[RMDB]
RNA sequence: GGGAACGACUCGAGUAGAGUCGAAAAUAGCUAUUCCCCUUUCGGCGAGACUUGGCGUGUUUCUGUCGUUCUUAGUAUAGCAUAUUUAUAAUGCGCUUACAUUUUCUUGCCAUGAAGAUAACAAUAUGAACACACUAAUGUUCGCAUUAGUGUGUUCAAAAGAAACAACAACAACAAC
Reactivity to 2A3 in 0.01 (KOAc 150mM, MgCl2 10mM, bicine 150mM(pH8.5), 24C), signal-to-noise 2, nucleotides 027 to 126: u050a000g030c040u070a050u040u020c000c020c000c010u020u070u110c040g010g000c000g000a010g000a010c020u060u050g000g000c040g010u060g070u000u020u000c090u050g000u020c010g010u040u030c000u010u000a030g040u080a040u050a040g000c030a010u080a110u150u090u050a190u090a090a020u020g000c030g000c000u020u080a020c030a130u080u120u080u070c020u020u020g060c020c010a040u090g050a020a020g030a030u140a100a030c020a140a000u080a080u150
Reactivity to DMS in 0.01 (KOAc 150mM, MgCl2 10mM, bicine 150mM(pH8.5), 24C), signal-to-noise 2, nucleotides 027 to 126: u010a130g030c080u010a160u000u000c000c020c010c300u000u000u000c210g000g030c020g020a070g010a030c300u000u000g010g000c020g030u000g010u000u000u000c140u000g010u010c030g000u000u000c020u000u000a060g030u010a090u010a050g020c000a300u020a050u010u000u020a050u000a060a030u000g010c030g000c000u000u000a260c160a060u000u000u000u000c020u000u000g020c010c030a040u010g010a080a070g000a120u010a070a070c130a050a080u010a080u000
An RNA of 177 nucleotides, treated with 2A3 and DMS and read out base by base. The reactions ran in a buffer of 150 mM KOAc, 10 mM MgCl2 and 150 mM bicine (pH 8.5), at 24 C. The 2A3 profile rests on 1,484 reads.